[RMDB]
RNA sequence: GGGAACGACUCGAGUAGAGUCGAAAAACUCCAGCACAACAAAAACAAAAUCGCGGAGGCGCAGCUAACUGAUUCUUUUGGAGAGGAGUUGCUGUCGGGACCCGUCCCGCAGCCAGUCGGAAGAAGAAGAGAUUAUGGAUUUCGAUCCAUAAUCUCUAAAAGAAACAACAACAACAAC
Reactivity to DMS in 0.01 (KOAc 150mM, MgCl2 10mM, bicine 150mM(pH8.5), 24C), signal-to-noise 5, nucleotides 027 to 126: a090c060u010c010c010a090g020c080a100c070a070a080c090a040a090a050a070a140c120a060a090a090a060u020c090g000c060g020g000a090g010g000c060g010c070a060g010c050u000a070a110c060u010g010a110u010u010c040u010u010u020u020g010g000a100g030a110g000g000a070g000u010u010g020c010u000g010u010c020g010g020g000a060c040c100c190g000u030c010c000c000g000c030a040g000c030c090a030g000u010c040g000g010a090a070g000a050a080g020a160
Reactivity to 2A3 in 0.01 (KOAc 150mM, MgCl2 10mM, bicine 150mM(pH8.5), 24C), signal-to-noise 8, nucleotides 027 to 126: a000c030u020c010c010a060g080c050a040c050a120a100c040a060a080a040a050a020c090a070a200a030a060u120c070g000c020g050g030a040g050g000c030g000c020a050g010c020u090a040a080c030u080g060a170u070u040c030u010u110u070u110g070g050a080g010a020g050g040a050g010u050u020g000c010u040g120u200c030g000g000g020a040c010c030c040g140u110c010c000c010g000c000a000g000c000c000a020g050u060c020g030g050a080a040g020a050a000g050a020